[RMDB]
RNA sequence: GGGAACGACUCGAGUAGAGUCGAAAACGCGCAGGGAUGUUUUCGAAUCUAUGUUUAUGCUCUCCCUUAGACUGAUUCACAGUUUCGAGCAUGGAUUCGCAUAGAUAGGCGUCUCAAAGGGAGCGCGCUAAUACUCGUGGUUCGCCACGAGUAUUAGAAAAGAAACAACAACAACAAC
Reactivity to DMS in 0.01 (KOAc 150mM, MgCl2 10mM, bicine 150mM(pH8.5), 24C), signal-to-noise 7, nucleotides 027 to 126: c030g010c020g020c030a180g010g000g000a030u000g010u000u000u000u000c070g010a090a070u000c000u000a010u000g010u000u010u000a040u010g010c020u000c020u000c060c060c060u000u000a060g010a030c020u000g010a280u010u010c270a170c020a030g000u000u000u000c180g000a020g010c010a020u000g010g010a110u000u000c190g010c110a040u000a040g010a050u010a120g000g000c010g010u000c010u000c020a070a090a110g000g000g020a120g010c030g010c010g010
Reactivity to 2A3 in 0.01 (KOAc 150mM, MgCl2 10mM, bicine 150mM(pH8.5), 24C), signal-to-noise 6, nucleotides 027 to 126: c010g020c020g000c030a070g000g010g030a020u020g040u010u130u120u170c030g070a070a080u010c010u010a010u020g060u020u140u050a050u050g010c010u010c010u030c030c030c000u010u050a040g010a020c010u030g060a220u270u200c130a080c000a240g020u030u100u160c070g020a010g000c000a010u010g020g070a150u180u120c070g000c020a020u020a020g020a010u020a040g020g010c010g010u000c010u000c000a100a070a020g110g030g020a100g010c000g000c000g000
Structure probing data (DMS and 2A3) for a 177-nucleotide construct.
Reactivities are given for positions 27 through 126.